Annotation
The data come from the RNA Mapping Database (RMDB), library OK1LIB. This 177-nucleotide RNA was probed chemically with 2A3 and DMS. Values are in units of 0.01, from 0 to 300, in steps of 10. The DMS profile rests on 3,631 reads. The 2A3 profile rests on 8,488 reads. The reactions ran in a buffer of 150 mM KOAc, 10 mM MgCl2 and 150 mM bicine (pH 8.5), at 24 C. For 2A3 the reverse transcriptase was SuperScript II with manganese.

[RMDB]
RNA sequence: GGGAACGACUCGAGUAGAGUCGAAAACGGCACUUGCUGCGCGGCUGCGCGCCAGCACCGGGCUGGGCGAAGUAUGGCGCUGCUUGCGCUGCGGCGAUUUCGCGCUCGGUGGGCCGCAGGGGCGUGGGACCAAACACACAUUCGUGUGUGUUUGGUCAAAAGAAACAACAACAACAAC
Reactivity to 2A3 in 0.01 (KOAc 150mM, MgCl2 10mM, bicine 150mM(pH8.5), 24C), signal-to-noise 8, nucleotides 027 to 126: c030g070g020c060a020c100u080u160g010c020u030g010c010g000c010g300g040c010u010g000c020g060c080g010c000c000a160g150c010a010c010c010g010g000g000c040u160g070g300g000c010g000a010a000g020u080a150u210g140g040c000g010c010u030g010c030u150u220g080c120g020c090u040g000c010g040g000c000g010a020u030u000u010c010g000c010g000c000u000c000g020g010u020g000g000g000c000c000g000c000a020g050g070g060g000c010g000u040g000g020
Reactivity to DMS in 0.01 (KOAc 150mM, MgCl2 10mM, bicine 150mM(pH8.5), 24C), signal-to-noise 1, nucleotides 027 to 126: c060g010g010c100a040c070u000u080g010c010u000g010c030g000c000g010g020c000u020g000c030g010c250g010c000c000a080g050c030a070c020c000g010g010g000c000u060g040g030g030c000g030a010a010g000u000a080u000g030g010c010g040c010u000g000c050u010u050g010c210g010c040u000g000c040g010g000c050g000a030u000u000u020c010g010c040g000c000u000c030g020g020u020g040g000g020c030c000g000c000a010g010g000g010g030c000g010u000g010g000